[RMDB]
The record gives the reactivity of an RNA of 207 nucleotides to 2A3 and DMS. The 2A3 profile rests on 3,492 reads. Source: RMDB library VIROID, as collected in RNAgym.
RNA sequence: GGGAACGACUCGAGUAGAGUCGAAAACGAAUCCAGCGCAGGUUCUGACGCGACCGGUGGCACGCCGAGUCGCUCACUGCCUCAACCUCCUUUUUCUCUAUCUAGCUUGGUCUCCGGGCGAGGGUGUUUAGCCCUUGGAACCGCAGUUGGUUCCUCGGGAGGAUAAUAUGUUCGCAUAUUAUCCUCCAAAAGAAACAACAACAACAAC
Reactivity to 2A3 in 0.01 (KOAc 150mM, MgCl2 10mM, bicine 150mM(pH8.5), 24C), signal-to-noise 4, nucleotides 027 to 156: c020g030a030a090u040c050c030a060g050c040g000c090a040g030g050u080u100c030u150g030a050c120g000c000g010a010c000c010g000g080u070g200g300c140a060c130g000c010c000g050a100g010u000c000g000c000u020c000a010c010u010g020c030c010u050c030a080a160c020c020u060c010c020u000u040u040u090u020c050u000c010u040a140u050c030u040a040g050c040u030u050g030g010u010c010u030c060c040g000g020g060c030g010a030g010g050g000u050g030u040u220u190a030g000c000c000c000u010u020g030g010a020a000c000c020g020c030a060g000u140u160g040g000u010u010c000c020u020c030g030
Reactivity to DMS in 0.01 (KOAc 150mM, MgCl2 10mM, bicine 150mM(pH8.5), 24C), signal-to-noise 1, nucleotides 027 to 156: c090g020a100a060u010c050c020a080g010c030g020c050a120g030g020u000u000c030u020g020a050c080g080c010g020a020c000c030g040g020u000g010g100c240a140c130g010c000c020g000a120g030u000c020g050c010u010c020a040c060u010g020c010c010u010c040a100a070c020c010u010c020c000u000u000u000u000u000c010u000c020u010a080u010c070u000a080g030c010u000u000g050g020u000c010u000c030c070g010g000g010c030g010a030g010g030g010u010g010u020u010u020a230g030c000c000c020u000u000g030g010a040a020c000c010g030c030a230g000u000u000g000g010u000u000c020c000u000c060g030